Source: RMDB library OK3TST, as collected in RNAgym. This 207-nucleotide RNA was probed chemically with 2A3 and DMS. 2A3 adducts were read by reverse transcription with SuperScript II with manganese. Reactivities are given for positions 27 through 156.

RNA sequence: GGGAACGACUCGAGUAGAGUCGAAAAUGGGAUUUCAAAGUUCAUGAGGCCGAACAUUGAACUGCUCAAACACUAGUCUGUAGUUCCUAGGGACCACAAUCUAGCUAAGAUCAGCCCUACUGCUUUUUCUCCAUGACAACAAAUCACCACCAAGACCUAAUCCCCUCUAGUUCGCUAGAGGGGAUUAAAAAGAAACAACAACAACAAC
Reactivity to 2A3 in 0.01 (KOAc 150mM, MgCl2 10mM, bicine 150mM(pH8.5), 24C), signal-to-noise 3, nucleotides 027 to 156: u030g000g030g040a020u060u030u090c130a120a130a030g040u050u030c010a010u020g040a010g100g000c060c060g040a050a030c040a030u020u110g020a040a050c040u040g040c010u020c040a090a100a030c080a060c050u060a040g050u040c080u090g010u050a030g010u000u030c020c010u020a020g040g010g010a030c020c030a020c050a070a050u050c010u030a010g070c020u060a110a020g000a080u010c020a020g020c000c000c000u050a080c020u000g050c000u070u130u030u070u060c030u040c070c020a050u060g040a050c000a080a020c010a010a110a020u090c040a070c140c000a030c100c020a030a010g170a040c240c020
Reactivity to DMS in 0.01 (KOAc 150mM, MgCl2 10mM, bicine 150mM(pH8.5), 24C), signal-to-noise 1, nucleotides 027 to 156: u000g020g000g040a110u000u020u010c060a080a110a200g000u000u000c000a010u000g010a090g000g000c110c100g000a030a090c050a090u010u010g020a030a020c030u000g000c170u000c060a040a090a100c210a060c000u000a050g000u000c040u000g050u000a030g010u000u000c020c040u000a200g070g020g040a040c020c000a040c030a040a120u000c040u000a070g030c040u000a080a140g010a070u000c010a050g020c000c010c010u000a080c060u010g060c050u000u000u000u010u000c010u000c000c010a090u000g000a070c050a060a070c060a040a020a080u000c050a020c010c030a020c040c030a020a130g010a090c080c050